[RMDB]
RNA sequence: GGGAACGACUCGAGUAGAGUCGAAAAGAUAUGGAAAAUAAAUUCACGUACCAAGAGCGAUAAGAUGACAUCGGAAACGAUGUUCAUCUUUUGACGCUCGACGUACGUGAAUUUAUUUUCCUAAGUCCGAUACAGUGUCCUUCGGGACACUGUAUCGAAAAGAAACAACAACAACAAC
Reactivity to DMS in 0.01 (KOAc 150mM, MgCl2 10mM, bicine 150mM(pH8.5), 24C), signal-to-noise 1, nucleotides 027 to 126: g020a080u010a300u000g000g000a000a010a000a000u000a010a010a040u020u000c010a010c000g000u000a000c000c050a140a300g000a020g020c020g030a180u000a010a000g000a000u000g010a020c000a000u000c000g010g000a170a160a240c020g000a000u000g010u020u000c000a020u000c000u000u000u000u000g020a080c060g000c000u000c000g010a210c300g010u000a000c000g020u000g010a000a000u000u000u000a000u000u000u000u000c010c000u000a050a120g020u010c120
The record gives the reactivity of an RNA of 177 nucleotides to DMS. The RNA was probed in 150 mM KOAc, 10 mM MgCl2 and 150 mM bicine (pH 8.5) at 24 C.